[RMDB]
Chemical mapping of a 177-nucleotide RNA with DMS and 2A3. The data come from the RNA Mapping Database (RMDB), library RFM100. DMS adducts were read by reverse transcription with MarathonRT. For 2A3 the reverse transcriptase was SuperScript II with manganese. For 2A3, 681 sequencing reads were counted.

RNA sequence: GGGAACGACUCGAGUAGAGUCGAAAAAGGUUUCUUAAUUGAACUUGUGGAUGUGAAUAUCAAGUUGCUAGUGGGCCAUACGGGGUAAGCUCGUCUGGCGAUGCGGGAUGAACCGAACGCAAAGUUAAACAGCCUUGGAAUUCGUUCCAAGGCUGUUAAAAGAAACAACAACAACAAC
Reactivity to DMS in 0.01 (KOAc 150mM, MgCl2 10mM, bicine 150mM(pH8.5), 24C), signal-to-noise 2, nucleotides 027 to 126: a060g000g000u000u000u000c000u000u000a110a160u040u000g010a020a060c000u020u020g010u010g000g020a130u000g020u000g030a140a060u000a020u030c040a080a250g010u000u000g000c040u000a020g050u020g000g010g030c020c050a100u010a110c100g000g000g000g060u040a070a130g000c000u010c010g000u010c000u000g050g000c000g030a010u020g030c160g030g000g000a100u010g010a120a070c000c050g000a070a100c000g070c070a010a000a100g010u010u000a010
Reactivity to 2A3 in 0.01 (KOAc 150mM, MgCl2 10mM, bicine 150mM(pH8.5), 24C), signal-to-noise 2, nucleotides 027 to 126: a000g080g020u060u010u000c070u070u030a210a160u110u100g000a000a000c010u000u000g040u050g020g030a110u080g160u100g180a060a090u120a040u120c060a070a000g000u080u040g020c010u060a050g050u150g020g040g000c020c000a000u010a110c010g000g000g040g040u220a050a120g120c000u000c000g000u010c000u000g000g000c000g040a040u040g000c020g000g080g000a040u110g050a030a020c010c030g000a000a000c000g000c050a010a070a000g030u030u150a020